[RMDB]
RNA sequence: GGGAACGACUCGAGUAGAGUCGAAAACAUGGGGAACUACAUCUGUGUCGCGAGUUCGAUUCGCGCCAGGGCCUGGUCCUGUAGCUCAGUUGGUAGAGCAAGCUGUUCCCCGGACACUUGUCGUCAUAAAAGUUGCCCCCGUUCGCGGGGGCAACAAGUACCUCUUAAGGUUCGCCUUAAGAGGUACAAAAGAAACAACAACAACAAC
Reactivity to DMS in 0.01 (KOAc 150mM, MgCl2 10mM, bicine 150mM(pH8.5), 24C), signal-to-noise 1, nucleotides 027 to 156: c040a080u020g000g020g040g010a020a070c000u030a040c080a120u000c010u000g020u010g030u000c060g000c000g040a030g020u000u000c140g030a300u000u010c020g010c000g020c000c010a060g020g000g000c050c070u020g030g000u010c000c010u000g000u000a140g000c000u000c060a160g020u000u000g010g000u000a100g000a080g010c050a040a050g020c060u000g010u000u000c020c010c020c030g000g000a100c050a050c150u010u000g010u000c020g000u010c020a110u020a060a100a030a170g030u000u010g040c000c000c000c000c000g040u000u000c210g040c070g030g000g080g110g030c010a000a000c020a010a230
Reactivity to 2A3 in 0.01 (KOAc 150mM, MgCl2 10mM, bicine 150mM(pH8.5), 24C), signal-to-noise 2, nucleotides 027 to 156: c090a130u160g000g010g000g010a020a020c010u080a040c070a140u080c040u030g130u050g160u300c000g000c030g000a000g020u140u190c090g080a210u130u000c000g010c000g010c000c000a000g000g020g000c000c080u090g070g010u080c010c000u070g050u060a050g000c010u020c010a120g030u140u110g150g080u160a040g010a000g010c020a020a000g040c020u030g010u030u010c020c000c010c010g020g000a020c020a010c060u100u150g010u090c050g040u020c020a030u120a140a150a030a040g000u010u000g020c060c020c010c000c000g010u000u030c030g000c010g030g050g000g000g030c000a000a000c000a000a000